[RMDB]
RNA sequence: GGGAACGACUCGAGUAGAGUCGAAAAUGUUAUCAAAUGUACUGUUUAAUACGCAAAUGGAUUUACUACGUUUUAAUUGUAUGUCUUCAUGUGCAGGCUCUAGUGGAUAGUAAUUUUCUCACAAUUUUUGGCACCGUUACACUUGUGCCCACAAAAAGUCUAGUUAAAGGUUCGCCUUUAACUAGACAAAAGAAACAACAACAACAAC
Reactivity to DMS in 0.01 (KOAc 150mM, MgCl2 10mM, bicine 150mM(pH8.5), 24C), signal-to-noise 2, nucleotides 027 to 156: u010g020u010u010a070u000c060a040a070a060u000g010u000a060c040u000g020u000u010u000a020a060u000a050c050g000c030a060a060a120u010g000g010a180u000u000u010a090c020u000a030c020g030u010u000u000u000a000a070u000u000g020u000a030u000g010u000c010u000u000c020a080u000g030u000g000c050a090g010g010c010u000c010u010a070g000u000g010g020a070u000a060g010u020a030a090u010u000u000u010c030u000c040a060c100a050a150u000u000u000u000u000g010g010c050a050c040c070g000u010u000a080c070a070c080u000u000g030u000g000c050c020c040a090c080a030a050a100a120a150
Reactivity to 2A3 in 0.01 (KOAc 150mM, MgCl2 10mM, bicine 150mM(pH8.5), 24C), signal-to-noise 3, nucleotides 027 to 156: u090g010u040u050a070u120c060a050a050a090u110g010u070a050c060u000g050u050u130u070a090a040u120a050c060g000c070a020a050a060u060g060g000a050u050u130u070a060c070u030a020c030g020u020u020u050u120a100a120u110u060g020u030a050u060g020u000c030u050u000c060a050u060g020u030g000c040a030g010g000c060u010c030u070a020g020u020g050g010a020u000a010g020u040a050a120u060u050u090u020c050u010c010a020c050a070a130u100u060u050u050u070g020g000c020a000c000c040g070u080u190a040c050a010c020u000u010g000u000g000c030c000c020a130c020a030a090a030a020a120
Overview:
This 207-nucleotide RNA was probed chemically with DMS and 2A3. For 2A3, 1,629 sequencing reads were counted. Values cover nucleotides 27 to 156.